[RMDB]
RNA sequence: GGGAACGACUCGAGUAGAGUCGAAAACCUCAAGUUUCUUGAUUUUCUUCUUCGCCUUCCGGAGCUCCUUCUCGAGAUCCUCAGCUUUUUUCCUUGAGUUCACCCACUGCUCGAGGACGUCUUCCCUAGAGUACAUUGUUCGCAAUGUACAAAAGAAACAACAACAACAAC
Reactivity to 2A3 in 0.01 (KOAc 150mM, MgCl2 10mM, bicine 150mM(pH8.5), 24C), signal-to-noise 9, nucleotides 027 to 129: c010c010u070c070a070a050g030u010u050u030c030u040u090g110a180u110u050u040u020c020u050u000c000u030u040c020g030c020c000u050u040c030c020g030g010a030g010c010u020c010c000u070u050c030u020c020g060a060g010a060u020c010c000u030c020a050g030c010u070u050u030u020u060u080c020c000u040u060g050a030g040u050u060c030a090c030c010c010a040c020u010g000c000u000c000g000a010g010g030a090c000g010u010c090u040u040c010c000c010u050a070g030a000
Reactivity to DMS in 0.01 (KOAc 150mM, MgCl2 10mM, bicine 150mM(pH8.5), 24C), signal-to-noise 9, nucleotides 027 to 129: c010c010u010c170a110a120g000u020u010u030c050u030u030g010a140u020u010u010u010c020u000u000c040u010u010c020g000c030c050u000u010c000c030g020g010a110g010c060u030c050c030u030u020c020u010c060g030a120g020a080u000c030c030u020c030a060g000c050u020u010u000u010u010u010c020c060u010u000g030a100g000u020u020c050a140c020c040c040a120c040u030g020c000u000c000g000a010g030g020a090c060g020u020c110u030u020c000c010c010u040a080g020a160